[RMDB]
RNA sequence: GGGAACGACUCGAGUAGAGUCGAAAAACGGUCAUAUACGUAUGACCGAAUGAGCAUAACAGGGCCACCCCAAAGCGUACACAUUGUGGCCCCUGUCAGAUUCUGGUAAAUCUGCGAGUUCUGCUAAAUUAGGUAACUCUCUUCGGAGAGUUACCAAGAGUCCUAUCCUGUUCGCAGGAUAGGACUCAAAAGAAACAACAACAACAAC
Reactivity to 2A3 in 0.01 (KOAc 150mM, MgCl2 10mM, bicine 150mM(pH8.5), 24C), signal-to-noise 1, nucleotides 027 to 156: a000c000g000g000u000c000a000u000a000u020a060c280g090u030a010u010g000a020c010c010g000a030a040u040g000a000g010c030a000u040a060a030c000a000g000g000g000c000c000a000c000c060c030c080a040a210a030g050c080g080u300a010c090a010c010a200u200u250g000u030g000g000c000c000c000c000u010g070u040c000a000g000a020u000u050c010u250g090g030u100a000a000a000u000c000u000g000c060g010a140g040u040u000c020u030g090c010u080a050a210a260u260u200a210g020g000u000a000a000c000u000c000u000c000u010u120c150g050g000a000g000a020g000u000u000a000c000c000a000a000